[RMDB]
RNA sequence: GGGAACGACUCGAGUAGAGUCGAAAAUCUUCAUUCAUAGUAUUUAACUGCUCAAGAUUAUGUCUUAAUCCUACUUCAAAAUCAUUAGGGUCAUGUGCUGGAGUCAUCUUAACUGCACCAGUUCCAAACGCGAUAUUACGUUCGCGUAAUAUCGCGUAAAAGAAACAACAACAACAAC
Reactivity to DMS in 0.01 (KOAc 150mM, MgCl2 10mM, bicine 150mM(pH8.5), 24C), signal-to-noise 1, nucleotides 027 to 126: u010c020u000u010c110a000u020u020c050a050u040a010g020u000a000u020u030u000a030a210c020u000g000c100u000c100a000a080g000a020u000u070a050u000g000u000c030u020u030a080a070u010c040c010u000a000c050u020u000c110a060a030a080a050u020c050a080u000u020a000g000g050g000u000c150a000u010g000u010g000c020u000g030g000a080g010u010c050a050u000c080u000u000a080a060c130u010g000c080a190c110c060a150g000u000u000c020c040a020a140
Reactivity to 2A3 in 0.01 (KOAc 150mM, MgCl2 10mM, bicine 150mM(pH8.5), 24C), signal-to-noise 4, nucleotides 027 to 126: u040c000u140u050c060a110u060u030c020a070u160a230g020u040a230u090u130u110a170a120c100u050g010c040u070c190a080a080g020a040u060u080a080u240g130u010c090u050u180a040a030u010c010c020u010a060c050u070u090c080a060a140a110a190u120c100a100u040u080a050g010g090g060u050c060a080u070g030u030g050c010u040g010g000a020g000u030c020a080u000c030u050u140a040a130c000u040g050c000a020c010c000a020g030u090u000c030c000a130a090
Source information
An RNA of 177 nucleotides, treated with DMS and 2A3 and read out base by base. Conditions: 150 mM KOAc, 10 mM MgCl2 and 150 mM bicine (pH 8.5), 24 C. For DMS the reverse transcriptase was MarathonRT. Reactivities are given for positions 27 through 126. The DMS profile rests on 1,245 reads.